[RMDB]
RNA sequence: GGGAACGACUCGAGUAGAGUCGAAAACUAUUGCUGGCCCGCCCGUUCCAAGUUGCGUAGUGGAUCACCUGGGGCCUAUGCGAAAGCUGGGCCUCACGGUCCAUAAUGUGGCAGGCACAGCGUGAGGCUGGCUUCACAGAGCAGCGACAACUGCCCGCGACUACGAAUUCUUCGGAAUUCGUAGUCGAAAAGAAACAACAACAACAAC
Reactivity to 2A3 in 0.01 (KOAc 150mM, MgCl2 10mM, bicine 150mM(pH8.5), 24C), signal-to-noise 1, nucleotides 027 to 156: c030u030a060u130u260g000c000u000g020g020c030c010c000g030c000c000c020g010u010u010c020c010a240a120g050u070u080g080c040g010u120a030g000u000g000g000a000u030c010a030c120c030u020g010g000g010g000c000c000u150a140u230g010c000g020a060a040a020g000c000u010g000g000g020c000c000u000c000a000c020g000g000u040c000c000a000u040a010a040u060g090u190g030g000c000a000g040g010c070a040c000a260g030c000g010u040g040a150g000g030c000u030g000g080c000u040u050c090a090c030a120g050a050g000c000a000g010c000g080a090c030a050a050c030u070g010c000c090c000g080

Chemical mapping of a 207-nucleotide RNA with 2A3. Values cover nucleotides 27 to 156. The RNA was probed in 150 mM KOAc, 10 mM MgCl2 and 150 mM bicine (pH 8.5) at 24 C.